[RMDB]
RNA sequence: GGGAACGACUCGAGUAGAGUCGAAAAACAUGGCGAUACAUGCGAUCGCGUCUAGCAGAGGUACCUCAUCAUGACGCUAGACAUGAGAUCAUGGUACCCAUGGCAGGAUCCAUGUGGUACACAUGAGUCUACCGAAAGUUUUCGAACUUUCGGUAGAAAAAGAAACAACAACAACAAC
Reactivity to DMS in 0.01 (KOAc 150mM, MgCl2 10mM, bicine 150mM(pH8.5), 24C), signal-to-noise 7, nucleotides 027 to 126: a110c080a070u000g010g010c020g010a060u000a050c030a070u010g010c160g000a050u000c020g020c020g010u010c000u000a020g010c020a110g010a150g000g010u010a100c130c040u000c100a090u010c070a080u010g000a200c150g000c020u000a010g010a050c020a110u010g000a100g010a150u000c010a010u000g000g010u000a010c020c000c010a020u000g000g020c180a170g010g010a160u010c010c000a010u000g010u010g020g020u000a010c020a050c010a010u000g000a060g010
Reactivity to 2A3 in 0.01 (KOAc 150mM, MgCl2 10mM, bicine 150mM(pH8.5), 24C), signal-to-noise 8, nucleotides 027 to 126: a000c080a080u130g100g000c010g030a010u050a070c080a120u220g100c220g080a010u010c010g010c010g010u000c010u010a010g000c040a020g030a060g130g060u160a160c010c050u110c030a100u040c000a040u150g060a030c060g000c000u010a000g010a010c010a020u150g120a090g010a040u030c000a000u010g000g000u000a000c000c020c000a000u010g020g000c100a140g150g170a100u060c010c010a000u000g110u220g010g000u020a010c180a010c000a010u000g010a000g060

An RNA of 177 nucleotides, treated with DMS and 2A3 and read out base by base. The 2A3 profile rests on 15,299 reads. The DMS profile rests on 10,307 reads.